An RNA of 177 nucleotides, treated with 2A3 and DMS and read out base by base.
RNA sequence: GGGAACGACUCGAGUAGAGUCGAAAAGCAUGAAGAGACGAUUAAUUACGGCAGCAUUGCCUUAUGUGAACAACAUUCCGCAUUUAGGAAAUUUAAUUCAAGUGCUUUCGGCCGAUGUCUUUGCGCGCAGACAGACAUUGUUCGCAAUGUCUGUCUGAAAAGAAACAACAACAACAAC
Reactivity to 2A3 in 0.01 (KOAc 150mM, MgCl2 10mM, bicine 150mM(pH8.5), 24C), signal-to-noise 3, nucleotides 027 to 126: g000c030a040u070g060a110a100g040a030g000a070c060g050a060u090u160a070a100u140u110a060c030g010g000c000a020g000c050a110u060u160g010c010c000u000u050a040u020g090u020g020a050a020c030a060a010c010a150u070u050c030c010g040c100a100u080u080u140a040g040g050a040a040a050u180u130u070a080a100u110u090c080a110a010g000u000g050c000u020u040u040c030g020g000c000c020g040a060u100g010u040c040u020u050u100g030c060g000c000g020
Reactivity to DMS in 0.01 (KOAc 150mM, MgCl2 10mM, bicine 150mM(pH8.5), 24C), signal-to-noise 4, nucleotides 027 to 126: g000c000a030u000g000a170a060g010a100g020a080c070g000a120u020u000a070a070u000u000a130c130g020g010c000a050g000c150a080u000u010g010c000c000u000u020a010u000g020u000g010a100a050c140a080a060c120a230u000u010c020c010g010c150a090u010u000u010a070g010g010a030a040a100u000u010u000a040a050u000u000c090a060a160g010u000g000c010u000u010u000c090g010g000c040c020g000a130u000g010u000c020u000u000u000g010c090g010c130g000